The data come from the RNA Mapping Database (RMDB), library M2RFPK.
Chemical mapping of a 207-nucleotide RNA with 2A3.
RNA sequence: GGGAACGACUCGAGUAGAGUCGAAAAUUGCGCCUCCGAUUCGCCGUCGGCAUUUCCCAAGCAGCCAUGACCUACCAGGCUGCGGUGCGGCUCGCCGCACAGGUCAUCCCUCAUCGGGCGCGUCCUGGAUAGGGCUAUACUUUCGAGUAUAGCCCAAGUCCUAUUAGUCCUUCGGGACUAAUAGGACAAAAGAAACAACAACAACAAC
Reactivity to 2A3 in 0.01 (KOAc 150mM, MgCl2 10mM, bicine 150mM(pH8.5), 24C), signal-to-noise 1, nucleotides 027 to 156: u100u050g030c010g020c000c000u020c030c000g020a080u120u040c060g020c090c050g020u030c040g010g000c010a080u080u010u000c010c000c040a030a100g010c000a000g030c010c000a150u130g000a010c000c010u070a160c080c040a020g000g000c000u010g000c000g000g010u010g010c000g000g060c090u090c070g200c010c000g000c000a010c020a000g000g080u050c050a130u080c030c040c020u110c030a090u110c080g000g000g000c030g010c020g030u080c020c030u040g040g000a050u040a110g030g000g000c000u000a000u000a000c000u030u030u070c080g010a000g000u010a010u020a070g010c020c000c000a000a000
The RNA was probed in 150 mM KOAc, 10 mM MgCl2 and 150 mM bicine (pH 8.5) at 24 C. 2A3 adducts were read by reverse transcription with SuperScript II with manganese. Reactivities are rounded to 0.1 and cut off at 0 and 3. For 2A3, 872 sequencing reads were counted.